[RMDB]
RNA sequence: GGGAACGACUCGAGUAGAGUCGAAAAAGGAGGGAUAGCGCCGUGAAGAUCAUUGAUAUAUUAUUGUCCAAACAAAACAUAUGUAUAGUCUUUAGUGGCGCUAUCCAUCCUGAGUUUCACAGGUUCUGCUGUUAACGAAUUUCGAUUCGUUAACAGCAAAAGAAACAACAACAACAAC
Reactivity to DMS in 0.01 (KOAc 150mM, MgCl2 10mM, bicine 150mM(pH8.5), 24C), signal-to-noise 2, nucleotides 027 to 126: a020g000g000a010g000g010g000a010u000a030g020c000g000c000c000g010u000g000a010a000g000a010u000c110a120u020u020g000a000u000a020u010a020u000u030a300u040u000g000u000c180c240a110a100a180c090a010a000a070a070c240a030u000a000u010g000u010a060u020a260g000u000c000u000u000u000a040g030u020g000g020c000g010c000u000a000u010c000c000a000u000c000c000u000g000a050g000u010u000u020c030a060c120a060g000g040u000u010c080u000
Reactivity to 2A3 in 0.01 (KOAc 150mM, MgCl2 10mM, bicine 150mM(pH8.5), 24C), signal-to-noise 4, nucleotides 027 to 126: a000g000g010a020g000g010g000a000u000a000g000c000g000c010c000g070u020g010a000a000g010a020u110c110a100u100u300g140a010u030a000u030a010u110u030a070u040u120g000u040c080c130a140a160a080c030a030a080a100a010c030a010u050a010u030g070u050a090u070a020g000u060c000u000u050u010a200g100u090g080g010c000g000c000u000a000u000c000c010a000u010c000c000u000g010a020g000u000u030u030c230a210c020a040g000g090u070u040c020u040

Record summary
An RNA of 177 nucleotides, treated with DMS and 2A3 and read out base by base. 2A3 adducts were read by reverse transcription with SuperScript II with manganese. It was measured as part of the RMDB libraries RFM100 and RFMREP. DMS adducts were read by reverse transcription with MarathonRT. The reactions ran in a buffer of 150 mM KOAc, 10 mM MgCl2 and 150 mM bicine (pH 8.5), at 24 C.